[RMDB]
RNA sequence: GGGAACGACUCGAGUAGAGUCGAAAAGCGGCCGUUGUUGGAGCACACCCGCGGCCUGGGUGAGAAAGACCUGAGUCUGGCGUUGGCCCUGGGCGAGGUGGUAUCGGUCGACCUGCCGCUGGCCCAGCGAUGGGUGAACAUUCGUGUUCACCCAUCGAAAAGAAACAACAACAACAAC
Reactivity to DMS in 0.01 (KOAc 150mM, MgCl2 10mM, bicine 150mM(pH8.5), 24C), signal-to-noise 3, nucleotides 027 to 126: g020c030g020g010c010c300g010u010u020g030u000u000g010g010a080g000c140a200c050a020c010c010c030g020c030g010g010c010c020u000g000g000g030u010g000a090g010a120a210a050g000a040c000c160u000g000a090g010u010c040u010g010g020c100g030u000u010g010g010c030c010c030u010g010g000g010c000g000a290g000g020u000g010g020u000a100u010c080g020g000u000c070g000a030c010c050u010g010c000c010g010c000u000g010g020c000c000c000a170g000
Reactivity to 2A3 in 0.01 (KOAc 150mM, MgCl2 10mM, bicine 150mM(pH8.5), 24C), signal-to-noise 1, nucleotides 027 to 126: g000c020g000g010c000c060g100u180u240g020u090u050g280g060a030g060c080a010c000a010c000c000c010g300c000g210g070c000c020u060g000g030g030u060g000a090g110a060a070a000g000a060c020c190u120g030a100g130u020c070u020g090g000c070g140u070u130g160g010c030c000c010u040g000g000g070c000g010a090g020g010u000g020g010u230a190u190c040g000g050u060c020g020a090c020c010u020g020c000c000g000c020u000g010g060c010c000c000a000g080